[RMDB]
RNA sequence: GGGAACGACUCGAGUAGAGUCGAAAAUAACAGUGUCAUGACGUUACGACGUCAUUUAAUUAGCAAUGACUGUAUGCUAAUUGAAUUGUGUUACGACACAAUGAUGCUGUUUAACAGUCAUUGAUACGAACUAGUGGUAUUUCGAUAUUACUAGUUCAAAAGAAACAACAACAACAAC
Reactivity to 2A3 in 0.01 (KOAc 150mM, MgCl2 10mM, bicine 150mM(pH8.5), 24C), signal-to-noise 9, nucleotides 027 to 126: u090a000a000c000a000g000u000g010u010c000a000u020g000a000c000g010u010u060a100c300g030a010c000g060u000c000a000u000u000u000a000a000u000u000a000g000c010a010a030u060g000a000c000u000g000u020a020u080g000c000u000a000a000u000u000g010a000a000u010u000g000u000g010u020u060a080c250g050a000c030a000c000a000a000u000g000a000u010g000c000u000g000u000u000u020a020a000c000a000g000u000c000a010u030u240g090a060u070a090c110
Reactivity to DMS in 0.01 (KOAc 150mM, MgCl2 10mM, bicine 150mM(pH8.5), 24C), signal-to-noise 9, nucleotides 027 to 126: u020a010a010c010a010g010u000g000u000c000a020u000g010a000c000g010u000u010a150c180g030a050c000g010u000c000a020u000u000u000a000a000u000u000a000g000c010a050a110u000g000a010c000u000g010u000a220u010g000c000u000a010a000u010u000g010a000a010u000u000g010u000g000u000u020a140c210g020a060c000a010c000a010a010u000g000a010u000g010c000u000g010u010u000u010a060a020c000a000g000u000c000a170u040u030g010a120u030a090c230